Structure probing data (2A3 and DMS) for a 177-nucleotide construct. For DMS the reverse transcriptase was MarathonRT. Values are in units of 0.01, from 0 to 300, in steps of 10. The 2A3 profile rests on 713 reads.
RNA sequence: GGGAACGACUCGAGUAGAGUCGAAAAUUUAUAAAUCAUAGAGGCACAGUGGAUUACAGAUGAUGCUUCGCAUCACUGCAUAUAAAGUCAUACUUAUGAGCAAAGCAAAUUAGUAUGACUUACCUAAUCUUGUGAUACACUUCGGUGUAUCACAAGAAAAAGAAACAACAACAACAAC
Reactivity to 2A3 in 0.01 (KOAc 150mM, MgCl2 10mM, bicine 150mM(pH8.5), 24C), signal-to-noise 1, nucleotides 027 to 126: u000u180u030a170u070a060a020a050u040c010a020u030a170g100a100g090g000c000a000c020a100g040u070g070g000a060u040u090a030c010a020g210a190u030g000a000u010g000c000u150u130c160g010c000a000u020c020a000c030u020g030c050a050u180a020u140a180a090a030g000u000c000a000u000a020c000u010u060a020u080g000a000g000c070a240a070a000g050c000a000a090a090u010u000a000g000u000a000u060g030a020c000u020u060a020c000c060u010a000a060
Reactivity to DMS in 0.01 (KOAc 150mM, MgCl2 10mM, bicine 150mM(pH8.5), 24C), signal-to-noise 1, nucleotides 027 to 126: u000u000u010a150u050a110a110a100u060c040a030u000a110g010a120g000g000c100a060c120a040g000u000g000g020a080u000u000a070c040a000g010a030u000g010a020u000g020c010u000u000c300g000c000a030u000c010a030c010u000g010c200a010u000a060u000a160a060a000g000u050c000a020u000a000c000u000u000a060u000g020a300g020c030a140a050a080g000c080a020a140a110u000u000a010g000u000a000u000g010a010c000u000u000a060c060c030u000a040a070